[RMDB]
The record gives the reactivity of an RNA of 207 nucleotides to 2A3. For 2A3, 1,125 sequencing reads were counted.
RNA sequence: GGGAACGACUCGAGUAGAGUCGAAAAGGGGUCGAACCGUGGCUUCUGACAUGCGUACGUGACUGAAGCCUCCACGGUCACUAUACGCAACAGCAGAAGCGUAACAUCGGUUCGACGGAGGCACCCAAACAUUGCAACGAUUCGUCGUUGCAAUGAAACAGGGAUACACCUUCGGGUGUAUCCCUGUAAAAGAAACAACAACAACAAC
Reactivity to 2A3 in 0.01 (KOAc 150mM, MgCl2 10mM, bicine 150mM(pH8.5), 24C), signal-to-noise 1, nucleotides 027 to 156: g160g000g010g000u010c000g000a000a000c010c000g000u000g020g010c000u020u000c020u030g030a220c120a300u250g000c000g010u000a010c010g000u020g000a000c000u010g020a050a010g020c010c010u000c000c000a000c000g000g000u000c000a000c000u060a110u030a100c010g030c010a060a280c100a250g080c010a020g000a000a000g010c000g020u040a030a000c030a270u060c000g000g020u000u010c000g010a000c000g000g010a000g000g000c000a040c010c000c000a040a050a000c000a000u010u000g020c000a000a000c010g040a030u040u050c210g040u010c010g000u270u000g000c010a000a000u000g010a010a000